Record summary:
Source: RMDB library OK2TRN, as collected in RNAgym. Structure probing data (2A3 and DMS) for a 177-nucleotide construct. For 2A3 the reverse transcriptase was SuperScript II with manganese. The reactions ran in a buffer of 150 mM KOAc, 10 mM MgCl2 and 150 mM bicine (pH 8.5), at 24 C. The DMS profile rests on 200,038 reads.

[RMDB]
RNA sequence: GGGAACGACUCGAGUAGAGUCGAAAAGUGACGAGUUGCAGAGGGACCGUGAGAACGGUUAUGGAGCAGCUGAUUGGCGUGCUCCAUGAACUUCGGGAAGAAAUGAGUUCCGAACAGUACGCCAGGACUAGUGCUUAGUAUUCGUACUAGGUACUAGAAAAGAAACAACAACAACAAC
Reactivity to 2A3 in 0.01 (KOAc 150mM, MgCl2 10mM, bicine 150mM(pH8.5), 24C), signal-to-noise 9, nucleotides 027 to 126: g130u080g050a030c050g030a020g020u040u030g020c020a010g040a130g070g030g000a010c000c010g010u020g030a070g010a040a010c010g030g010u010u030a070u190g020g010a020g000c010a000g000c020u050g090a300u090u220g020g000c050g020u030g000c000u000c000c010a010u030g010a010a010c010u050u040c020g020g030g030a060a050g050a050a180a090u260g030a080g050u030u000c010c000g010a040a010c020a020g020u030a010c010g000c020c010a020g020g050a020
Reactivity to DMS in 0.01 (KOAc 150mM, MgCl2 10mM, bicine 150mM(pH8.5), 24C), signal-to-noise 9, nucleotides 027 to 126: g010u010g010a090c110g010a080g010u000u000g010c030a050g000a200g000g000g000a030c020c010g010u000g000a200g000a160a030c030g000g000u000u000a020u010g000g000a060g010c000a090g000c010u000g010a150u010u010g010g010c000g010u000g010c000u000c020c020a010u000g010a060a060c080u000u000c040g010g000g010a070a080g010a080a100a130u010g010a110g010u000u000c010c020g010a050a070c270a040g010u000a020c040g010c010c010a060g000g010a240